Source information:
Structure probing data (DMS and 2A3) for a 207-nucleotide construct. Source: RMDB library M2RFPK, as collected in RNAgym.
[RMDB]
RNA sequence: GGGAACGACUCGAGUAGAGUCGAAAAGUAGAAUCUGUCAAGGAAAACCCCAAAACCUUACACUGAGAGCAUUUAGCCUGAUUACUCUUUAAAUCAAAUCAGGCAAUAGAGAGAAACUCGAGAGGUGAAACGGGAGUAAUGUUCGCAUUACUCCCAACAAAUAUUGCAUCUUCGGAUGCAAUAUUUGAAAAGAAACAACAACAACAAC
Reactivity to DMS in 0.01 (KOAc 150mM, MgCl2 10mM, bicine 150mM(pH8.5), 24C), signal-to-noise 1, nucleotides 027 to 156: g020u010a060g000a100a100u000c080u030g030u000c070a030a110g020g020a110a060a080a140c020c010c020c030a060a080a090a140c010c010u000u020a080c020a150c110u000g000a050g010a000g030c030a300u000u000u000a090g010c000c000u010g000a040u020u010a050c040u000c020u000u040u000a030a010a040u000c050a030a060a040u000c000a020g000g030c020a040a030u000a030g000a060g000a200g030a100a040a070c070u000c020g010a060g020a060g020g000u000g000a060a130a100c020g020g040g030a020g000u000a010a010u010g020u000u000c250g020c020a020u000u000a020c010u020c000c000c000a000a010
Reactivity to 2A3 in 0.01 (KOAc 150mM, MgCl2 10mM, bicine 150mM(pH8.5), 24C), signal-to-noise 2, nucleotides 027 to 156: g090u100a030g060a160a080u120c090u120g050u110c110a050a020g020g040a070a060a070a110c010c020c010c040a030a080a020a050c040c010u070u070a050c060a040c080u110g060a010g000a000g080c040a050u010u020u100a030g000c000c000u000g000a000u010u020a030c030u020c060u130u300u130a050a050a050u180c070a010a040a000u000c000a000g000g010c000a000a000u010a000g040a000g020a000g040a060a100a030c020u020c010g050a070g000a020g030g070u060g060a090a100a050c100g000g010g000a010g000u000a010a010u000g010u040u020c120g000c080a000u000u000a000c010u020c000c010c000a000a000